RNA sequence: GGGAACGACUCGAGUAGAGUCGAAAAGCGGUGCUGUACGUCUACGACAAGCUGGAACGGCGCUACGGCAGCGGUUUCCUGCGCGCCCUGGCGGCGCAGAAGCCGAACUUCCUGCGCGGCACGGCGAGACUCCCAGUAGUUUCGACUACUGGGAGUCAAAAGAAACAACAACAACAAC
Reactivity to 2A3 in 0.01 (KOAc 150mM, MgCl2 10mM, bicine 150mM(pH8.5), 24C), signal-to-noise 2, nucleotides 027 to 126: g090c030g080g140u020g010c020u000g030u030a030c030g000u000c010u060a060c070g150a030c090a150a050g070c060u130g100g050a110a020c040g020g000c000g060c130u030a010c020g000g000c010a020g070c000g010g000u010u020u020c010c000u060g030c090g000c010g000c020c030c060u160g190g030c060g040g000c000g000c000a000g010a020a000g080c090c090g030a090a070c030u030u020c000c000u010g020c000g000c020g040g040c010a030c030g030g020c000g020a060
Reactivity to DMS in 0.01 (KOAc 150mM, MgCl2 10mM, bicine 150mM(pH8.5), 24C), signal-to-noise 2, nucleotides 027 to 126: g000c050g060g010u000g000c010u000g060u020a040c080g020u010c000u000a210c160g040a180c140a050a120g030c110u010g000g020a130a160c120g010g000c000g010c170u000a030c070g010g010c060a020g020c000g010g010u010u000u000c120c000u000g000c080g010c030g000c010c040c150u000g000g030c000g000g000c010g000c030a000g000a010a000g010c040c100g020a070a250c090u000u000c070c000u000g020c070g030c000g020g000c000a060c190g020g000c020g020a140